RNA sequence: GGGAACGACUCGAGUAGAGUCGAAAAUAAGUUGAUAAUGACCAAGUCAAGGUCCAGGCUGGCAACAGAGCAGACAGAGCGAGGCACAUCGAUGGGUAGCGAGGAAAGUCGACUUAAAGUCGUCCAACUACGAUUAAUGUUUCGACAUUAAUCGUAGAAAAGAAACAACAACAACAAC
Reactivity to DMS in 0.01 (KOAc 150mM, MgCl2 10mM, bicine 150mM(pH8.5), 24C), signal-to-noise 9, nucleotides 027 to 126: u020a070a100g010u000u000g000a070u010a090a080u020g000a110c030c020a070a120g010u010c120a080a110g010g010u000c020c090a080g010g000c030u010g010g010c070a080a090c100a050g010a070g020c060a050g000a070c100a070g000a070g010c070g000a080g000g010c060a050c080a050u020c080g000a080u010g000g000g010u010a030g010c070g000a090g000g000a050a080a110g010u000c010g000a020c010u000u010a060a100a050g010u000c010g020u000c010c040a070a180
Reactivity to 2A3 in 0.01 (KOAc 150mM, MgCl2 10mM, bicine 150mM(pH8.5), 24C), signal-to-noise 9, nucleotides 027 to 126: u160a050a020g040u040u050g070a060u050a210a090u140g040a040c010c010a060a030g090u110c050a080a090g050g010u010c020c030a030g050g000c020u030g010g010c000a040a030c010a050g060a010g020c020a010g030a040c010a030g060a010g040c020g030a060g010g040c020a010c020a100u080c040g050a070u060g020g020g030u030a020g040c030g020a020g020g040a080a040a000g040u010c000g010a020c000u050u090a100a040a020g010u010c010g010u010c010c010a030a050